[RMDB]
RNA sequence: GGGAACGACUCGAGUAGAGUCGAAAAAUACCGAGAUAGAGUCAUCGGGACUAUUCAGAACCAGCUUGACUCAAUAUCCAAAGGGAAAAUUGUGAUGAAAACAUUGGCUAUUCACAGGCAGCUGAUACCGUCCCUAAUUGUUCGCAAUUAGGGACGGAAAAGAAACAACAACAACAAC
Reactivity to 2A3 in 0.01 (KOAc 150mM, MgCl2 10mM, bicine 150mM(pH8.5), 24C), signal-to-noise 2, nucleotides 027 to 126: a000u130a070c040c030g040a050g010a060u030a000g030a020g010u030c000a000u000c000g000g050g020a060c030u060a300u140u300c040a040g160a210a080c000c000a080g130c170u000u000g000a000c000u030c050a040a000u110a000u010c000c010a010a050a140g080g030g040a030a020a040a060u120u120g010u020g000a070u080g030a030a080a050a060c040a100u020u070g070g020c040u120a120u120u030c030a040c010a080g030g020c090a040g010c070u040g010a020u080a110
Reactivity to DMS in 0.01 (KOAc 150mM, MgCl2 10mM, bicine 150mM(pH8.5), 24C), signal-to-noise 1, nucleotides 027 to 126: a120u080a120c000c030g030a100g010a050u000a070g000a040g000u000c000a010u020c110g050g000g000a200c050u000a020u190u070c210a110g000a050a220c070c000a070g070c010u000u000g020a000c000u000c030a120a200u020a140u010c000c070a080a120a020g000g030g000a150a070a030a070u020u110g000u000g000a030u050g000a190a040a000a060c080a140u020u010g030g000c000u000a080u010u050c020a040c140a030g010g010c020a080g030c000u010g030a090u000a150

Structure probing data (2A3 and DMS) for a 177-nucleotide construct.
The DMS profile rests on 1,222 reads.
For 2A3 the reverse transcriptase was SuperScript II with manganese.
DMS adducts were read by reverse transcription with MarathonRT.